[RMDB]
RNA sequence: GGGAACGACUCGAGUAGAGUCGAAAACACAAUUGUGAAUCAAGAGAGGUAUGUUAAAAUUACUGGGUUGUACCCAACCAUUACGGUACCUGAAGAGUUCGCAAGUCAUGUUGCCAACUUCCAAAAAACCGAUCUCGCUUCGGCGAGAUCAAAAGAAACAACAACAACAAC
Reactivity to DMS in 0.01 (KOAc 150mM, MgCl2 10mM, bicine 150mM(pH8.5), 24C), signal-to-noise 3, nucleotides 027 to 129: c130a000c170a090a140u000u020g000u090g000a030a190u020c060a060a190g000a090g030a040g040g030u010a030u060g000u000u000a040a040a070a130u010u080a150c110u010g010g080g000u000u000g000u010a200c010c010c090a070a130c170c140a000u070u020a060c000g050g080u000a010c050c010u030g000a130a080g000a120g030u000u000c150g000c060a000a030g040u030c220a100u020g030u000u100g030c010c000a020a140c080u010u060c040c000a000a080a050a100a080a100c160c080
Reactivity to 2A3 in 0.01 (KOAc 150mM, MgCl2 10mM, bicine 150mM(pH8.5), 24C), signal-to-noise 4, nucleotides 027 to 129: c050a000c030a080a180u070u060g000u000g040a010a020u110c090a180a000g110a000g000a020g050g000u040a010u040g070u050u190a050a140a100a070u170u110a060c060u050g000g000g020u060u080g060u180a070c000c000c000a000a080c040c000a000u120u080a030c060g050g000u020a010c010c010u040g010a070a010g010a040g110u040u020c010g010c000a010a000g050u070c010a010u070g040u050u010g010c010c000a060a040c050u050u000c000c010a040a060a010a010a000a070c100c050
This 170-nucleotide RNA was probed chemically with DMS and 2A3. For 2A3, 6,547 sequencing reads were counted. Values cover nucleotides 27 to 129. The DMS profile rests on 7,440 reads.